[RMDB]
RNA sequence: GGGAACGACUCGAGUAGAGUCGAAAACCGUAGGGUCCACGGAGGCGCAGAUAUAUGUAUUAUAGCCACCUUCGAAAGAGGGUGGAAUGUAGCAUAUGUAGCCUCGGUGGACCCUAAACGGAAAAUGAACAUCUUCCUUUCGAGGAAGAUGUUCAAAUACCAUGAAGAGAUUCGUCUCUUCAUGGUAAAAAGAAACAACAACAACAAC
Reactivity to DMS in 0.01 (KOAc 150mM, MgCl2 10mM, bicine 150mM(pH8.5), 24C), signal-to-noise 3, nucleotides 027 to 156: c000c010g040u000a030g000g020g020u000c000c000a040c000g000g010a040g010g000c000g000c150a190g020a110u010a050u000a050u010g010u010a030u010u000a020u000a060g000c000c010a010c010c000u010u000c000g020a170a180a260g010a040g020g010g020u000g010g020a010a030u000g020u000a150g000c010a010u000a030u000g020u000a300g030c000c000u000c000g000g080u010g000g020a000c000c000c000u000a000a020a040c000g020g000a070a040a060a130u000g000a010a010c000a000u010c000u000u000c000c000u000u010u020c300g000a040g000g000a030a020g020a000u000g000u010u000c020a020a110a200
Reactivity to 2A3 in 0.01 (KOAc 150mM, MgCl2 10mM, bicine 150mM(pH8.5), 24C), signal-to-noise 1, nucleotides 027 to 156: c000c000g000u000a010g000g040g020u000c000c030a000c030g250g000a010g020g020c030g000c250a030g240a050u140a060u010a030u080g080u080a260u270u050a090u200a000g010c000c000a000c000c000u000u000c010g030a060a110a070g000a000g000g000g000u010g000g020a030a000u050g010u000a000g000c000a000u080a000u010g010u040a070g000c000c000u010c000g000g000u000g000g000a000c000c000c010u000a000a000a000c000g010g130a020a200a000a120u260g000a010a010c000a000u050c010u000u090c000c000u070u090u280c250g050a040g010g000a000a000g000a030u000g000u000u010c000a000a000a000

Annotation:
An RNA of 207 nucleotides, treated with DMS and 2A3 and read out base by base. Source: RMDB library RNAMAK, as collected in RNAgym. The 2A3 profile rests on 655 reads. For DMS the reverse transcriptase was MarathonRT.